RNA sequence: GGGAACGACUCGAGUAGAGUCGAAAAGUAGUUAUGCUGAAAAUCGUUGAGGUUGUAUGGAGUAGGUUAACCGUAAGACCUUAAGUUGAAAAACUUUAAAAUUAAUCUCAGGUAAAUUACUUUGAGUAAAACCUUCGUCGUUUCGACGACGAAGGAACAAGUUACACACGUUCGCGUGUGUAACUUGAAAAGAAACAACAACAACAAC
Reactivity to 2A3 in 0.01 (KOAc 150mM, MgCl2 10mM, bicine 150mM(pH8.5), 24C), signal-to-noise 1, nucleotides 027 to 156: g060u110a000g010u000u090a020u110g120c020u020g010a030a050a050a080u210c090g030u080u100g030a010g000g030u010u020g030u060a100u100g050g040a070g020u190a030g110g000u070u140a040a080c020c000g030u020a090a000g010a020c000c010u070u000a010a000g030u020u000g070a130a040a000a000a000c030u090u210u200a050a040a060a090u060u080a120a100u070c000u000c010a010g020g000u030a070a150a070u030u020a000c000u120u100u130g030a120g000u060a000a060a050a060c000c000u000u000c000g010u000c000g000u000u040u130c060g060a020c000g000a000c000g000a000a000g000g000a010a010